[RMDB]
RNA sequence: GGGAACGACUCGAGUAGAGUCGAAAAGAUAUGGAGAUUGAACUACGACGAAAGAUUUCGUUGAAAGCUUCUAGUUCGGAAACGAACUAGAAGCUGGAGAAAUUGAGUAGUCGCAAUCUCCUAAGUCGAUUAACUUACAGUUCGCUGUAAGUUAAUCAAAAGAAACAACAACAACAAC
Reactivity to DMS in 0.01 (KOAc 150mM, MgCl2 10mM, bicine 150mM(pH8.5), 24C), signal-to-noise 4, nucleotides 027 to 126: g010a120u000a300u020g010g010a000g010a020u000u000g010a150a080c180u010a300c020g000a010c000g010a190a190a300g000a010u000u000u000c010g010u000u000g010a190a200a030g000c000u000u000c010u010a000g010u000u000c000g010g020a150a100a200c000g000a000a000c000u000a000g010a000a000g010c000u000g010g000a060g020a000a020a010u000u020g020a080g010u000a100g000u000c010g020c010a000a020u000c000u000c000c000u000a010a060g010u000c080
Reactivity to 2A3 in 0.01 (KOAc 150mM, MgCl2 10mM, bicine 150mM(pH8.5), 24C), signal-to-noise 1, nucleotides 027 to 126: g060a070u170a100u240g000g000a010g010a000u040u030g010a160a100c160u270a070c300g010a010c010g030a050a000a020g020a010u040u040u010c050g150u260u110g030a070a050a000g010c000u000u000c000u000a000g000u020u010c020g000g000a090a100a040c000g000a010a000c000u000a000g000a000a000g000c000u000g000g000a030g010a010a010a010u000u000g000a000g010u000a000g000u010c000g000c010a000a000u010c000u010c000c000u010a060a010g100u080c110